Source: RMDB library M2PK90, as collected in RNAgym. An RNA of 177 nucleotides, treated with 2A3 and DMS and read out base by base. For 2A3, 1,632 sequencing reads were counted. 2A3 is a SHAPE reagent: it acylates the 2'-hydroxyl of flexible nucleotides of all four kinds. For DMS, 3,471 sequencing reads were counted. Conditions: 150 mM KOAc, 10 mM MgCl2 and 150 mM bicine (pH 8.5), 24 C. DMS adducts were read by reverse transcription with MarathonRT.
RNA sequence: GGGAACGACUCGAGUAGAGUCGAAAAAAAGUGUACGAAAGAACAAAGAAGCAAUCAAACCGAGUAGUGAAAUGAUGGCUUCAGUCCAAAAUGGGCAAUCACUACAGACGGAGCCAAAGGCAAUUAAUAAUACUUCUGGAUUCGUCCAGAAGUAUUAAAAAGAAACAACAACAACAAC
Reactivity to 2A3 in 0.01 (KOAc 150mM, MgCl2 10mM, bicine 150mM(pH8.5), 24C), signal-to-noise 2, nucleotides 027 to 126: a000a000a020g090u070g020u010a080c070g070a060a020a050g010a070a000c040a080a090a030g080a040a000g050c020a020a040u100c020a050a000a040c020c000g010a010g000u060a000g010u040g050a050a050a190u090g030a010u070g050g000c000u080u100c030a020g010u040c000c000a080a100a050a260u120g000g050g040c020a000a030u070c020a000c020u020a010c020a000g040a070c040g040g010a000g050c020c040a070a000a000g040g000c010a020a020u150u070a110a080
Reactivity to DMS in 0.01 (KOAc 150mM, MgCl2 10mM, bicine 150mM(pH8.5), 24C), signal-to-noise 4, nucleotides 027 to 126: a080a020a060g000u000g010u000a070c070g000a040a060a080g010a070a030c070a050a100a070g010a050a040g010c050a040a030u000c070a050a080a160c050c030g010a100g020u010a030g030u000g010a050a080a100u000g010a070u000g010g000c020u000u000c060a070g010u000c030c020a020a040a070a110u000g010g020g000c080a090a100u000c000a010c010u000a020c130a100g020a150c070g020g010a070g000c000c040a020a050a060g000g010c100a030a050u010u000a030a130